[RMDB]
RNA sequence: GGGAACGACUCGAGUAGAGUCGAAAAAAUGGGCAAAAAUACGCCGAACAAGCCGCCAAAGACAUCAACGGCAAACUGGCACUACCCGUCUUUACCGAUGAACAGCUGAACCAGUUCACUAAAGAGCAUGGCAAAGCCCCAACCGACUUUAACGAUCCCAACCUUAGUAGUUCGCUACUAAGGUUGGAAAAGAAACAACAACAACAAC
Reactivity to 2A3 in 0.01 (KOAc 150mM, MgCl2 10mM, bicine 150mM(pH8.5), 24C), signal-to-noise 2, nucleotides 027 to 156: a000a020u140g000g000g000c080a210a080a030a000a000u150a090c060g000c000c000g030a000a050c080a090a040g000c010c000g070c020c080a090a040a000g120a090c000a020u120c030a040a010c010g000g000c000a020a020a020c070u020g010g010c020a000c060u060a000c010c010c000g020u000c000u030u070u050a030c050c010g110a100u020g020a030a030c030a070g040c080u020g010a030a000c040c000a020g010u000u000c030a030c080u150a000a070a030g060a020g000c080a070u030g030g000c000a080a000a090g010c010c050c010c000a030a020c030c060g180a010c040u230u170u190a080a060c090g050a070u110c030
Chemical mapping of a 207-nucleotide RNA with 2A3. For 2A3 the reverse transcriptase was SuperScript II with manganese. Values cover nucleotides 27 to 156. It was measured as part of the RMDB library OK3TST.